[RMDB]
RNA sequence: GGGAACGACUCGAGUAGAGUCGAAAACACGCCGAUCCGCCGUGGUGACAGUGGCCGUCCGGGUGGACGCGACGGUGCUGCCCGCAGUGGCAAGCGCACUGCUAAUGAGGCGGGGUCACGUCGCCUAUAAUAAAUCCUCAUUCGUGAGGAUUUAUUAAAAAGAAACAACAACAACAAC
Reactivity to 2A3 in 0.01 (KOAc 150mM, MgCl2 10mM, bicine 150mM(pH8.5), 24C), signal-to-noise 9, nucleotides 027 to 126: c040a010c020g050c040c060g040a080u010c000c000g000c010c010g100u080g010g040u040g050a080c030a060g010u050g110g030c010c000g010u000c010c010g050g010g080u200g080g060a070c030g010c080g030a010c010g010g020u030g010c000u010g000c000c000c020g000c040a030g000u110g100g050c070a120a030g070c040g000c060a020c020u020g010c020u100a140a140u200g070a080g080g000c100g020g020g000g000u030c010a010c040g020u010c010g010c000c000u100a100
Reactivity to DMS in 0.01 (KOAc 150mM, MgCl2 10mM, bicine 150mM(pH8.5), 24C), signal-to-noise 9, nucleotides 027 to 126: c130a090c070g010c060c040g000a080u010c020c010g010c040c030g020u010g010g020u010g010a060c020a050g030u000g010g020c010c010g000u000c020c050g010g010g030u010g010g010a080c050g010c140g000a030c030g010g010u000g010c010u000g000c000c000c040g020c080a050g010u000g010g010c050a090a090g020c120g020c020a030c010u000g010c020u010a090a140u010g010a140g010g010c000g010g010g000g010u000c020a060c020g010u000c040g010c010c020u000a120